[RMDB]
RNA sequence: GGGAACGACUCGAGUAGAGUCGAAAAGUAACUGACUUCGGUCAGUUACAAAUCAAGAAUUCCGUUUUCAGUCGGGAAAAUCUGAACAAAAAUAAAAUAAAAAAACGUAGCGGUUCGCCGCUACGAAGAUAGGUGAUUACUUCGGUAAUCACCUAUCAAAAGAAACAACAACAACAAC
Reactivity to 2A3 in 0.01 (KOAc 150mM, MgCl2 10mM, bicine 150mM(pH8.5), 24C), signal-to-noise 1, nucleotides 027 to 126: g000u000a000a020c000u000g000a000c010u030u030c160g050g000u000c000a000g000u000u000a000c000a040a000a000u150c010a040a040g060a090a070u110u000c000c000g000u080u030u120u140c110a110g040u050c040g000g100g070a040a000a000a180u060c010u000g010a050a000c010a060a270a020a100a120u290a150a150a050a000u210a120a300a100a040a000a000a040c010g000u010a000g040c000g000g060u000u080c260g020c050c000g000c030u000a000c000g000a000a000
Structure probing data (2A3) for a 177-nucleotide construct. Source: RMDB library M2PK50, as collected in RNAgym. The 2A3 profile rests on 666 reads.